[RMDB]
RNA sequence: GGGAACGACUCGAGUAGAGUCGAAAAGCGCGAAGCGGUGUAGCUUCACUUUGAUGGCGGUACUAUGAAUUGAUGCAAGGUGUGGAGCGACCUUAAACAGUUCUGGUGGUGCUCUGAAUGGAGUGCUUGAGGCCUCGCCGAUUCGUCGGCGAGGCAAACCUGUGAUAUUCUUCGGAAUAUCACAGGUAAAAGAAACAACAACAACAAC
Reactivity to 2A3 in 0.01 (KOAc 150mM, MgCl2 10mM, bicine 150mM(pH8.5), 24C), signal-to-noise 2, nucleotides 027 to 156: g040c070g000c050g030a030a020g030c030g010g030u120g080u130a060g000c010u000u010c010a030c070u090u100u110g090a100u090g020g020c040g020g010u030a070c020u050a100u120g070a100a060u050u040g020a010u060g080c050a060a050g060g000u020g020u110g030g000a020g010c050g010a000c000c000u070u140a100a090a020c030a070g010u050u010c010u080g030g000u020g010g060u020g000c000u010c000u050g080a040a040u190g020g010a050g030u020g020c010u050u080g050a040g040g010c000c000u000c000g000c020c030g020a030u070u020c130g030u020c010g100g020c030g000a000g000g000c020a010a030